Chemical mapping of a 177-nucleotide RNA with 2A3 and DMS. The reactions ran in a buffer of 150 mM KOAc, 10 mM MgCl2 and 150 mM bicine (pH 8.5), at 24 C. The data come from the RNA Mapping Database (RMDB), libraries RFM100 and RFMREP. For 2A3 the reverse transcriptase was SuperScript II with manganese. Values are in units of 0.01, from 0 to 300, in steps of 10.

RNA sequence: GGGAACGACUCGAGUAGAGUCGAAAAUGUCGGGAAUAACCGACGUUAGGGAAUUCGGCAAGUUAGUCCCGUAAGUUCGCGAUAAGGGAUGCCUGCCUCGCAAUGAGGCAGGUCGCAGUGACUCGGACCUCAUGAAUACAUUCGUGUAUUCAUGAGGAAAAGAAACAACAACAACAAC
Reactivity to 2A3 in 0.01 (KOAc 150mM, MgCl2 10mM, bicine 150mM(pH8.5), 24C), signal-to-noise 9, nucleotides 027 to 126: u070g010u020c010g000g020g070a160a300u170a240a140c000c020g010a010c000g000u020u030a050g020g030g060a050a090u090u060c030g040g000c050a050a070g070u100u100a030g040u060c000c000c000g000u050a020a040g040u050u130c150g000c020g090a030u040a100a030g020g010g000a010u060g010c000c000u000g000c010c000u000c000g040c150a130a250u300g000a000g000g000c000a010g000g000u000c000g000c010a010g040u020g090a050c030u010c040g040g020a030
Reactivity to DMS in 0.01 (KOAc 150mM, MgCl2 10mM, bicine 150mM(pH8.5), 24C), signal-to-noise 9, nucleotides 027 to 126: u000g010u000c010g010g000g010a180a130u040a150a150c010c000g010a010c010g020u000u000a070g010g010g010a090a110u010u000c040g000g020c060a090a080g010u010u010a090g010u000c000c000c000g010u010a070a130g000u010u020c100g020c040g020a120u010a090a170g010g000g010a070u010g000c000c000u000g000c000c000u000c000g020c240a140a080u030g000a020g000g010c000a000g000g010u000c060g010c080a080g010u000g000a100c050u010c030g010g010a300